Record summary:
This 177-nucleotide RNA was probed chemically with DMS and 2A3. 2A3 adducts were read by reverse transcription with SuperScript II with manganese.
RNA sequence: GGGAACGACUCGAGUAGAGUCGAAAACUUUCCAUAGCUGGGGGAUUAAAAAUUACUGAACCUGCUGCGGAUUUAGGAGCAGGACUUGCUGUAGUCUCUUCUUUGUAUAAUCGUCUUUCUCCCCAAACGCAAUAUCAUUGUUCGCAAUGAUAUUGCGAAAAGAAACAACAACAACAAC
Reactivity to DMS in 0.01 (KOAc 150mM, MgCl2 10mM, bicine 150mM(pH8.5), 24C), signal-to-noise 2, nucleotides 027 to 126: c160u000u010u000c020c020a110u000a090g030c090u020g010g000g000g000g000a150u020u010a010a060a120a100a090u010u000a050c110u010g000a150a140c020c000u000g010c010u000g000c030g000g000a150u010u020u010a090g000g010a040g020c020a040g010g000a050c130u000u030g010c030u000g010u010a050g000u000c050u000c000u000u010c030u000u000u000g000u000a060u010a030a060u010c050g010u000c040u000u000u000c090u010c000c010c000c080a080a060a220
Reactivity to 2A3 in 0.01 (KOAc 150mM, MgCl2 10mM, bicine 150mM(pH8.5), 24C), signal-to-noise 1, nucleotides 027 to 126: c000u000u010u000c000c010a050u100a060g030c060u080g030g040g000g000g010a000u100u130a080a100a040a040a020u110u090a040c010u010g030a020a050c010c000u010g010c000u060g090c020g020g040a070u140u020u220a090g000g020a000g000c010a000g020g030a000c010u040u120g000c020u050g010u070a020g010u010c030u030c000u120u000c030u120u060u040g030u030a110u020a130a130u040c050g030u020c110u000u070u000c020u110c010c010c000c030a000a050a030
Reactivities are rounded to 0.1 and cut off at 0 and 3.